[RMDB]
RNA sequence: GGGAACGACUCGAGUAGAGUCGAAAAUAUCGCCUUGCGCGAGUGCGGCGUCGGAAACGGCGUUUGGUAUUGCCUUAGGUCCUCCGGCGCCAAAGGGGUAAGGAAAAACCAGGGGAAAAGCUCAGUCCCAUUUAUAAUGGUUCGCCAUUAUAAAUGGAAAAGAAACAACAACAACAAC
Reactivity to DMS in 0.01 (KOAc 150mM, MgCl2 10mM, bicine 150mM(pH8.5), 24C), signal-to-noise 6, nucleotides 027 to 126: u040a050u010c080g000c010c010u010u030g030c070g010c000g010a060g010u000g000c300g020g000c000g020u000c000g020g000a020a060a150c290g010g020c010g000u000u010u010g000g020u020a100u010u050g000c000c000u000u000a030g010g040u000c020c080u000c010c010g010g000c010g000c000c000a000a020a030g000g010g000g000u000a050a070g000g010a070a070a040a100a130c030c030a080g000g000g000g000a060a080a080a090g000c060u010c050a100g010u010c100
Reactivity to 2A3 in 0.01 (KOAc 150mM, MgCl2 10mM, bicine 150mM(pH8.5), 24C), signal-to-noise 8, nucleotides 027 to 126: u180a030u050c040g020c010c020u070u180g050c180g000c020g060a040g040u070g070c070g000g000c000g010u000c000g000g020a040a060a080c110g030g030c160g110u010u010u030g040g000u110a220u160u300g060c000c000u020u020a040g000g060u020c000c010u000c000c000g000g000c000g000c000c000a010a000a000g010g010g010g010u030a030a040g000g000a040a050a010a030a050c030c040a050g020g010g000g020a020a060a040a050g030c030u040c050a030g070u080c000